[RMDB]
Conditions: 150 mM KOAc, 10 mM MgCl2 and 150 mM bicine (pH 8.5), 24 C.
The record gives the reactivity of an RNA of 177 nucleotides to DMS.

RNA sequence: GGGAACGACUCGAGUAGAGUCGAAAAGAUAUGGAAGGACGCUAUCUACCCACCUACACAGGCCGAAGAACGAAAUCGGAAACGAUUUCGGGAGGCUGGGUGUAGAGGAUAGCGUCCUUCCUAAGUCCAUGAAAAUCGAGUUCGCUCGAUUUUCAUGAAAAGAAACAACAACAACAAC
Reactivity to DMS in 0.01 (KOAc 150mM, MgCl2 10mM, bicine 150mM(pH8.5), 24C), signal-to-noise 2, nucleotides 027 to 126: g000a100u010a300u010g040g030a050a050g010g000a000c010g010c040u000a000u000c010u000a110c070c000c110a300c090c030u000a010c000a000c010a300g000g000c010c020g000a230a180g000a220a290c000g000a000a000a000u010c000g000g000a070a140a170c000g000a010u000u000u000c000g020g020g000a020g020g030c000u010g000g000g010u000g000u000a000g000a080g010g020a010u000a000g000c000g050u000c000c020u010u000c000c000u010a000a140g000u020c030
For DMS the reverse transcriptase was MarathonRT. It was measured as part of the RMDB library TTRINS.